[RMDB]
Structure probing data (DMS and 2A3) for a 177-nucleotide construct. The RNA was probed in 150 mM KOAc, 10 mM MgCl2 and 150 mM bicine (pH 8.5) at 24 C. The DMS profile rests on 9,053 reads. It was measured as part of the RMDB library OK1LIB.
RNA sequence: GGGAACGACUCGAGUAGAGUCGAAAACGAGUAUCGGAUGUAGACUCAGGAUAAGCGAUGUCCCCAGCAGAAUAAGCAUCUAUUGGACAAUAGUAAAACCGGGACACAUACUUUUGAUUAACAGCACAAUCAUUACCGGAUUCGUCCGGUAAUGAUUAAAAGAAACAACAACAACAAC
Reactivity to DMS in 0.01 (KOAc 150mM, MgCl2 10mM, bicine 150mM(pH8.5), 24C), signal-to-noise 5, nucleotides 027 to 126: c050g010a080g040u010a060u010c060g010g000a070u020g010u010a110g010a060c050u000c010a120g000g000a070u020a080a130g000c140g020a160u010g010u020c020c010c020c100a180g010c040a070g000a080a050u030a090a100g020c060a100u020c020u010a040u020u010g000g010a050c120a010a020u000a030g010u010a080a070a160a070c120c150g000g010g010a020c030a060c070a090u010a110c080u000u000u000u000g000a070u010u010a050a070c130a070g010c160a090c180
Reactivity to 2A3 in 0.01 (KOAc 150mM, MgCl2 10mM, bicine 150mM(pH8.5), 24C), signal-to-noise 6, nucleotides 027 to 126: c030g020a020g050u070a070u110c050g030g040a060u090g010u130a030g030a050c010u000c030a020g020g040a080u070a180a030g060c060g090a070u040g020u020c000c000c000c010a030g000c010a010g050a220a090u230a180a020g040c000a040u060c020u070a050u020u090g070g050a030c060a090a080u050a030g090u090a010a050a030a060c020c020g000g010g000a010c000a000c000a040u190a150c020u060u090u060u100g130a090u060u160a100a000c020a050g070c070a030c110